[RMDB]
The record gives the reactivity of an RNA of 177 nucleotides to DMS.
RNA sequence: GGGAACGACUCGAGUAGAGUCGAAAAGAUAUGGACUUUCGUCGUGCAGCUCCUUUGAUCUCGGAAACGAGGGAGGAGCUGAACUACACGGCGAAAGUCCUAAGUCGAAGCUCACUUCGGUGAGCAAGAAGGCUUAGAUCUUCGGAUCUAAGCCUUCAAAAGAAACAACAACAACAAC
Reactivity to DMS in 0.01 (KOAc 150mM, MgCl2 10mM, bicine 150mM(pH8.5), 24C), signal-to-noise 2, nucleotides 027 to 126: g000a040u000a300u010g010g030a000c000u000u000u000c000g020u010c000g000u000g000c010a000g000c000u010c000c000u000u000u010g020a070u010c000u000c010g020g000a120a120a270c030g000a000g010g000g030a050g000g010a020g030c000u000g010a000a020c090u000a300c010a000c000g000g000c000g010a010a000a000g010u000c000c000u000a000a110g010u000c040g000a120a130g010c010u000c000a000c000u000u000c130g000g000u000g000a020g020c000a040a050
Notes
It was measured as part of the RMDB library TTRDEL. The reactions ran in a buffer of 150 mM KOAc, 10 mM MgCl2 and 150 mM bicine (pH 8.5), at 24 C.